[RMDB]
RNA sequence: GGGAACGACUCGAGUAGAGUCGAAAAAAAGAUAUGGAGCAACGGGAGUUGUAGCCUGCAUCGAUCAAAGCUCGGAAACGAGCUUUGGGAGCAGGACUACAACGAAGAACGUUGCUCCUAAGUCAAAGAUAAUGGUGGACUUCGGUCCACCAUUAUCAAAAGAAACAACAACAACAAC
Reactivity to DMS in 0.01 (KOAc 150mM, MgCl2 10mM, bicine 150mM(pH8.5), 24C), signal-to-noise 1, nucleotides 027 to 126: a080a060a090g000a080u000a300u010g000g010a040g000c010a020a010c000g000g050g000a190g000u000u010g070u000a020g000c050c000u000g010c000a300u000c220g020a140u020c000a010a010a000g000c050u000c000g010g000a050a110a140c010g000a010g010c000u000u000u000g000g000g010a010g050c020a010g000g000a090c010u000a000c000a000a000c000g000a080a140g000a140a130c000g010u010u000g040c000u000c000c000u010a010a050g010u020c020a050a180a160

This 177-nucleotide RNA was probed chemically with DMS. The RNA was probed in 150 mM KOAc, 10 mM MgCl2 and 150 mM bicine (pH 8.5) at 24 C. Values are in units of 0.01, from 0 to 300, in steps of 10.